Structure probing data (2A3 and DMS) for a 177-nucleotide construct. Conditions: 150 mM KOAc, 10 mM MgCl2 and 150 mM bicine (pH 8.5), 24 C.
RNA sequence: GGGAACGACUCGAGUAGAGUCGAAAAGACGCCUGUGUGGCGAAGCGAGCAUGCGAAAGAGCCGCACAGUCCAUCUAAUAUAAAGCGGCGAGAUGGAUUGCUCGCAAAAAGAUCCAUAUCACUGAGACGUCAUUAAUAUCUUCGGAUAUUAAUGACGAAAAGAAACAACAACAACAAC
Reactivity to 2A3 in 0.01 (KOAc 150mM, MgCl2 10mM, bicine 150mM(pH8.5), 24C), signal-to-noise 8, nucleotides 027 to 126: g060a010c040g040c010c010u060g030u020g020u060g050g000c030g020a050a010g000c000g010a010g000c030a040u140g020c020g070a150a090a050g110a050g020c000c010g000c010a020c010a000g010u000c000c000a040u020c020u110a130a140u130a120u060a170a150a020g080c020g060g020c030g010a020g000a020u020g000g010a000u000u070g000c010u000c010g000c000a050a110a000a010a010g080a020u000c010c000a020u040a020u110c040a050c070u070g040a030g020a080
Reactivity to DMS in 0.01 (KOAc 150mM, MgCl2 10mM, bicine 150mM(pH8.5), 24C), signal-to-noise 5, nucleotides 027 to 126: g000a120c120g000c060c000u000g020u020g010u020g000g000c000g000a070a120g000c000g010a010g000c010a090u010g000c180g020a140a200a080g000a160g030c010c010g040c000a030c080a030g010u000c010c020a110u010c060u020a090a080u050a140u020a050a100a060g030c010g000g030c060g000a040g000a010u000g000g000a020u000u010g010c010u000c010g010c010a040a040a050a080a050g010a060u000c040c030a040u010a050u010c030a070c080u000g000a130g000a220
Source: RMDB library OK1LIB, as collected in RNAgym.